[RMDB]
RNA sequence: GGGAACGACUCGAGUAGAGUCGAAAAGAUAUGGAAAUGCAGAGAUUAAUACCUACCCACCUCGGAAACGAGAGGGUAUUAAGAUCGACGAAGCAUUUCCUAAGUCAAAGAUCAGUUCGCUGAUCAAGAUGACUUAUAACUUCGGUUAUAAGUCAUCAAAAGAAACAACAACAACAAC
Reactivity to 2A3 in 0.01 (KOAc 150mM, MgCl2 10mM, bicine 150mM(pH8.5), 24C), signal-to-noise 7, nucleotides 027 to 126: g030a030u170a060u190g000g000a010a010a000u010g000c020a030g020a000g010a050u030u020a020a010u020a030c000c010u150a290c030c010c000a030c010c010u010c010g020g030a090a060a050c010g010a000g000a020g020g000g000u000a000u010u020a020a010g030a060u030c020g160a200c080g080a190a010g010c000a000u000u000u010c000c000u010a070a020g100u080c120a160a050a070g010a020u010c010a000g050u100u160c260g070c150u000g000a010u010c000a000a040
Reactivity to DMS in 0.01 (KOAc 150mM, MgCl2 10mM, bicine 150mM(pH8.5), 24C), signal-to-noise 5, nucleotides 027 to 126: g000a120u020a200u020g000g010a000a000a000u000g020c000a060g020a100g000a190u000u000a010a010u000a010c010c020u000a110c050c020c020a300c100c000u000c000g010g000a120a070a180c000g000a010g000a110g000g000g000u000a000u000u000a020a020g010a110u000c030g010a150c190g010a100a090g010c000a010u000u000u000c000c000u000a020a070g000u010c130a050a090a100g000a010u000c000a010g010u000u010c250g020c000u000g000a010u000c000a060a100